The record gives the reactivity of an RNA of 177 nucleotides to DMS and 2A3. DMS adducts were read by reverse transcription with MarathonRT. 2A3 is a SHAPE reagent: it acylates the 2'-hydroxyl of flexible nucleotides of all four kinds. 2A3 adducts were read by reverse transcription with SuperScript II with manganese. For 2A3, 3,376 sequencing reads were counted.
[RMDB]
RNA sequence: GGGAACGACUCGAGUAGAGUCGAAAAAGCCGUUGCCGGUGUCCUUGCCAGGUAGCAGGGUGGCAUCAAACAAAAUACCGCGGGUUACGAUGCCGUUGCGAUGAGCGUAGAUACUUCCGCGCGGACAAGGAAUCAGAAAUUUCGAUUUCUGAUUCCUAAAAGAAACAACAACAACAAC
Reactivity to DMS in 0.01 (KOAc 150mM, MgCl2 10mM, bicine 150mM(pH8.5), 24C), signal-to-noise 4, nucleotides 027 to 126: a130g010c030c010g020u010u000g010c040c070g030g030u000g000u000c020c030u000u000g030c020c060a110g020g030u000a080g030c020a040g000g020g000u010g010g000c010a020u000c020a110a090a090c110a080a060a100a090u010a080c060c010g010c050g020g000g010u000u000a100c180g000a040u000g010c010c010g000u000u010g020c010g010a090u010g000a130g000c010g000u000a070g010a130u010a060c120u000u010c050c040g020c020g010c020g000g010a120c270a120
Reactivity to 2A3 in 0.01 (KOAc 150mM, MgCl2 10mM, bicine 150mM(pH8.5), 24C), signal-to-noise 3, nucleotides 027 to 126: a020g040c010c010g000u040u110g030c020c010g080g070u050g040u070c010c000u000u030g010c010c030a120g120g090u120a040g020c040a030g000g020g100u070g030g000c010a010u030c020a030a070a080c050a040a130a040a040u150a100c020c020g030c030g040g070g010u030u020a040c060g010a020u020g000c000c010g030u020u060g030c010g020a090u080g060a060g070c010g030u020a020g000a080u090a110c040u070u010c030c020g010c000g000c020g040g010a000c020a020